[RMDB]
RNA sequence: GGGAACGACUCGAGUAGAGUCGAAAAACCACUCCGUGCAAGCGCGAGUGGGAAGGGUGGACACACAUGCGCAGUCGACGGAUGUGUGAAUGAGACCGUGUGUACGUGCGAUCCAGACGCUCACUGGCCUGUUAUAUCAGUUCGCUGAUAUAACAGGAAAAGAAACAACAACAACAAC
Reactivity to 2A3 in 0.01 (KOAc 150mM, MgCl2 10mM, bicine 150mM(pH8.5), 24C), signal-to-noise 9, nucleotides 027 to 126: a000c010c000a010c000u000c010c010g020u050g060c090a140a140g020c010g070c100g020a010g000u030g000g000g020a040a090g110g010g020u080g050g020a020c000a000c000a000c000a030u090g160c030g000c030a090g200u250c070g080a170c010g070g060a020u010g020u000g010u010g040a030a120u140g020a040g020a040c010c030g040u070g000u020g020u070a090c100g050u070g070c030g020a040u030c020c010a010g040a080c030g000c040u030c030a050c040u030g080g000
Reactivity to DMS in 0.01 (KOAc 150mM, MgCl2 10mM, bicine 150mM(pH8.5), 24C), signal-to-noise 9, nucleotides 027 to 126: a090c010c000a020c010u000c000c010g010u000g000c300a120a120g010c010g000c160g010a020g030u000g000g010g010a050a060g000g000g020u000g000g010a250c020a010c010a010c000a010u000g010c010g020c030a250g010u010c160g010a110c010g000g000a020u000g010u000g010u000g000a110a080u010g010a160g010a090c030c020g010u000g010u000g010u000a060c100g020u000g000c030g000a090u000c030c020a090g000a110c070g000c030u000c030a110c070u000g000g000